[RMDB]
Overview
Chemical mapping of a 207-nucleotide RNA with DMS and 2A3. Source: RMDB library RNAMAK, as collected in RNAgym.

RNA sequence: GGGAACGACUCGAGUAGAGUCGAAAACCUCAGUUCGCUGAGGACCAUCACCUUUGUGGAUUCUCUAGCGUGGACGAUAAGAGAAAUUGUCCCAUUGGGACAUUUCUCUUUUGACGUCUCGGGAUCCACUCUGGUAUUCGAUCGCCUUCGGGCGAAACAUCGUGUAUUCGUUCGCGAAUACACGAUGAAAAGAAACAACAACAACAAC
Reactivity to DMS in 0.01 (KOAc 150mM, MgCl2 10mM, bicine 150mM(pH8.5), 24C), signal-to-noise 1, nucleotides 027 to 156: c010c010u000c030a100g060u000u000c230g040c010u000g010a070g000g030a060c020c020a130u000c120a080c000c020u000u000u030g000u020g020g010a060u000u000c000u000c030u030a160g020c080g040u000g030g020a070c010g010a170u000a020a020g000a070g000a020a030a040u010u000g000u010c000c000c010a300u000u000g100g020g000a020c000a030u000u000u000c000u010c000u000u000u000u000g020a180c060g000u000c010u010c050g030g000g000a090u010c000c030a010c000u000c040u000g020g050u000a120u000u000c050g010a160u000c040g010c020c010u000u000c300g010g010g060c000g000a000a050a250
Reactivity to 2A3 in 0.01 (KOAc 150mM, MgCl2 10mM, bicine 150mM(pH8.5), 24C), signal-to-noise 6, nucleotides 027 to 156: c000c000u000c010a030g020u060u110c200g000c100u000g000a000g020g010a030c010c010a120u190c050a010c010c000u010u010u010g020u010g000g010a020u230u040c080u020c050u110a100g080c090g140u200g080g070a040c070g050a050u040a110a000g010a010g010a020a030a030u210u140g010u000c000c030c080a290u180u300g010g000g000a000c000a000u000u000u000c010u000c010u000u000u010u030g040a010c000g020u020c010u010c020g010g000g000a000u000c000c000a000c000u000c000u010g000g020u010a080u090u210c100g120a120u040c000g000c010c000u060u120c270g090g000g010c010g000a020a010a010